[RMDB]
RNA sequence: GGGAACGACUCGAGUAGAGUCGAAAAUCAAGAGGCUCUUUAUAGCGUUGUCGGGAUGCCUCGUCCUUACAAGCUUGGGUCAUCUCCUUGACCAGUCGUCGUUACUGUAGCAGUAUAAUUCAAAAAGGAUGAUGCGACUAUUCGUAGUCGCAUCAUCAAAAGAAACAACAACAACAAC
Reactivity to 2A3 in 0.01 (KOAc 150mM, MgCl2 10mM, bicine 150mM(pH8.5), 24C), signal-to-noise 5, nucleotides 027 to 126: u170c060a050a050g080a070g090g020c020u040c000u000u190u080a180u140a160g060c100g160u020u040g030u030c070g040g010g020a010u090g110c080c000u090c050g000u000c020c000u010u030a020c030a100a010g000c010u080u130g060g010g000u030c010a120u010c050u050c050c020u070u120g040a100c000c050a030g020u010c020g010u040c030g060u130u040a050c020u040g070u120a020g010c020a020g040u150a040u110a150a130u140u170c160a100a080a020a060a000g150
Reactivity to DMS in 0.01 (KOAc 150mM, MgCl2 10mM, bicine 150mM(pH8.5), 24C), signal-to-noise 2, nucleotides 027 to 126: u010c110a040a020g020a090g000g020c000u000c000u000u010u010a080u040a120g000c050g050u000u030g050u000c110g010g000g030a030u020g000c040c020u000c010g000u000c040c010u020u030a030c060a050a080g010c050u000u020g010g040g000u000c000a010u020c080u000c060c040u040u060g010a090c090c020a040g000u000c090g030u010c020g020u000u000a020c040u000g020u040a120g010c070a020g030u000a080u000a050a060u000u020c170a070a070a050a120a110g010